[RMDB]
RNA sequence: GGGAACGACUCGAGUAGAGUCGAAAAAGUGCAAAAACAGCUGGAAACUCAUAUGGACUCUGUGAUACUCAAAUUAUUUCCGAUGCCCUUUCCAGCAGAGAAUCCGUACGUGGGGCCGCAUUCCGUACCAUUAGUCCUGAUUCGUCAGGACUAAUGGAAAAGAAACAACAACAACAAC
Reactivity to 2A3 in 0.01 (KOAc 150mM, MgCl2 10mM, bicine 150mM(pH8.5), 24C), signal-to-noise 3, nucleotides 027 to 126: a000g090u060g000c040a080a010a020a110a080c060a070g070c020u080g010g040a060a100a080c040u030c060a080u080a100u210g040g020a010c010u030c030u040g040u080g070a070u080a150c050u040c140a100a080a180u180u060a100u040u100u060c020c020g010a040u060g020c020c020c000u020u050u030c020c050a010g010c000a000g020a000g000a020a050u000c030c030g000u030a050c070g030u100g010g000g010g010c000c000g000c020a040u080u000c000c020g040u030a070
Reactivity to DMS in 0.01 (KOAc 150mM, MgCl2 10mM, bicine 150mM(pH8.5), 24C), signal-to-noise 3, nucleotides 027 to 126: a070g010u010g010c070a060a080a110a110a060c140a120g010c010u010g020g010a050a060a050c170u000c060a060u000a060u000g000g020a050c060u000c050u000g020u000g010a080u010a030c120u000c150a060a060a080u010u010a100u000u000u000c020c020g010a090u010g020c030c020c040u000u000u010c030c020a100g000c010a020g000a050g010a120a090u000c050c040g000u000a030c160g000u000g010g000g000g000c030c030g010c080a100u000u000c010c030g030u010a160